The record gives the reactivity of an RNA of 177 nucleotides to DMS and 2A3. 2A3 adducts were read by reverse transcription with SuperScript II with manganese. Conditions: 150 mM KOAc, 10 mM MgCl2 and 150 mM bicine (pH 8.5), 24 C. Reactivities are given for positions 27 through 126. For DMS, 1,003 sequencing reads were counted.
RNA sequence: GGGAACGACUCGAGUAGAGUCGAAAAGGCGGCUGCACCCGAGGAGCCAGCCGAUGUCCGUGUGGUGGAUGUGCCCACCGUUUCUGGGCAACUGCUCCAGGAUGGCUACCACUACCAGCAGCCGGCCUGACCGGUAGUGCUUCGGCACUACCGGUCAAAAAGAAACAACAACAACAAC
Reactivity to DMS in 0.01 (KOAc 150mM, MgCl2 10mM, bicine 150mM(pH8.5), 24C), signal-to-noise 1, nucleotides 027 to 126: g000g050c040g010g000c110u000g000c000a150c070c030c000g000a030g010g020a080g000c010c020a000g010c030c160g000a030u000g000u000c000c090g040u030g000u000g090g030u000g000g000a300u060g070u020g010c080c000c010a050c030c140g000u000u000u060c000u040g050g000g000c000a060a120c000u040g060c060u030c000c030a130g000g030a090u000g000g010c040u040a150c010c000a160c070u000a190c090c030a140g000c010a050g000c000c000g000g090c060c010
Reactivity to 2A3 in 0.01 (KOAc 150mM, MgCl2 10mM, bicine 150mM(pH8.5), 24C), signal-to-noise 3, nucleotides 027 to 126: g030g010c000g000g000c010u010g000c000a000c010c080c000g000a090g000g020a000g060c130c020a020g000c040c040g100a100u040g010u020c000c020g010u040g010u010g010g010u000g020g040a240u160g090u250g220c000c000c000a000c000c000g010u170u190u020c030u150g000g000g000c020a100a140c010u040g000c000u000c010c000a000g050g050a090u100g040g000c020u110a170c020c060a100c110u140a100c010c060a040g010c000a000g000c000c000g030g080c000c020